[RMDB]
The record gives the reactivity of an RNA of 177 nucleotides to 2A3. Reactivities are rounded to 0.1 and cut off at 0 and 3.
RNA sequence: GGGAACGACUCGAGUAGAGUCGAAAAGAAAAUAGUGGAAAAGAAAAACACGCGGGCGAGCGAAAGUCGGCACGAGCACUCGGGAAAGGGAUUUAGGGAGGGAUUUAACUGCUCGGAGCGAAAGAAAGGGUUACUAAUACUUCGGUAUUAGUAACCCAAAAGAAACAACAACAACAAC
Reactivity to 2A3 in 0.01 (KOAc 150mM, MgCl2 10mM, bicine 150mM(pH8.5), 24C), signal-to-noise 1, nucleotides 027 to 126: g180a000a080a020a010u160a000g060u050g050g070a090a030a060a070g160a010a190a000a070a000c040a010c010g020c000g030g040g000c060g000a150g000c000g060a060a030a000g070u070c040g030g000c010a000c020g000a000g000c010a000c020u070c010g000g000g030a100a100a000g000g010g010a110u180u150u250a050g020g060g030a140g000g010g000a060u010u020u090a160a000c060u110g000c000u000c040g000g030a060g000c020g020a070a070a070g020a000a040a050